Chemical mapping of a 177-nucleotide RNA with 2A3 and DMS.
RNA sequence: GGGAACGACUCGAGUAGAGUCGAAAAACUGUCGAUAUCAGAGAUUUUAACAGUUCGAUAGUAAAUAAACUGUUCAAGAUGAAACUGACGCAUAGGUGGUUUAUUUGUACUCGACGCUUCGACAUAGACUGGCAGGAUAUUUCGAUAUCCUGCCAGUAAAAGAAACAACAACAACAAC
Reactivity to 2A3 in 0.01 (KOAc 150mM, MgCl2 10mM, bicine 150mM(pH8.5), 24C), signal-to-noise 3, nucleotides 027 to 126: a000c030u030g050u030c040g000a010u010a020u080c040a010g040a020g040a080u050u060u010u030a030a030c030a020g010u020u070c040g120a100u150a090g110u140a040a080a060u100a000a010a020c010u000g010u110u000c050a030a040g030a090u070g100a090a000a050c050u090g000a010c060g030c110a060u040a170g080g000u030g030g000u000u020u070a160u080u050u060g060u020a000c030u020c010g030a020c040g000c050u080u030c010g040a040c000a020u100a020g100
Reactivity to DMS in 0.01 (KOAc 150mM, MgCl2 10mM, bicine 150mM(pH8.5), 24C), signal-to-noise 2, nucleotides 027 to 126: a090c050u000g000u020c000g020a060u020a190u020c020a030g000a110g030a090u020u010u000u000a070a000c030a050g020u000u040c200g000a100u020a270g030u050a140a010a060u010a080a000a030c000u000g020u000u000c080a050a080g000a050u000g010a070a070a050c090u000g020a100c140g010c120a040u030a060g010g000u000g000g020u010u000u000a090u010u000u010g000u000a010c030u000c010g000a150c040g000c110u000u000c000g020a070c050a120u000a020g010
DMS adducts were read by reverse transcription with MarathonRT. Conditions: 150 mM KOAc, 10 mM MgCl2 and 150 mM bicine (pH 8.5), 24 C.